[RMDB]
RNA sequence: GGGAACGACUCGAGUAGAGUCGAAAAGUGGGGCCGGGCCAAGGGCUGCGGACGCGGGGACGCGCUUUCCCCCAGACCCAUGGACAGGUGGGCCGCAGCCUCCUUCGCGGCCGGCGGGGCGGCGGCGGACUGAUCUUGCGUUCGCGCAAGAUCAGUCAAAAGAAACAACAACAACAAC
Reactivity to 2A3 in 0.01 (KOAc 150mM, MgCl2 10mM, bicine 150mM(pH8.5), 24C), signal-to-noise 1, nucleotides 027 to 126: g110u110g000g010g040g010c000c040g000g040g000c010c010a030a010g030g000g000c000u000g000c040g040g030a030c090g060c130g050g010g000g000a000c010g060c060g020c300u140u010u120c000c030c000c060c000a020g050a130c000c040c000a000u020g100g030a120c080a160g230g100u000g020g000g000c000c000g030c000a000g030c000c010u140c000c000u040u090c010g020c070g040g020c000c000g000g000c010g000g000g000g000c060g000g010c030g010g000c010g000
Reactivity to DMS in 0.01 (KOAc 150mM, MgCl2 10mM, bicine 150mM(pH8.5), 24C), signal-to-noise 1, nucleotides 027 to 126: g110u000g010g000g000g020c080c060g010g020g040c030c040a110a090g000g000g010c000u000g000c010g000g000a150c100g000c290g000g000g060g000a110c200g100c180g020c030u000u010u000c000c000c000c000c070a100g000a200c030c010c020a080u000g060g000a230c150a070g060g000u000g010g000g030c000c010g000c000a000g030c000c030u000c030c050u000u000c260g000c030g000g010c010c080g000g030c090g000g000g000g000c120g000g000c000g020g040c000g010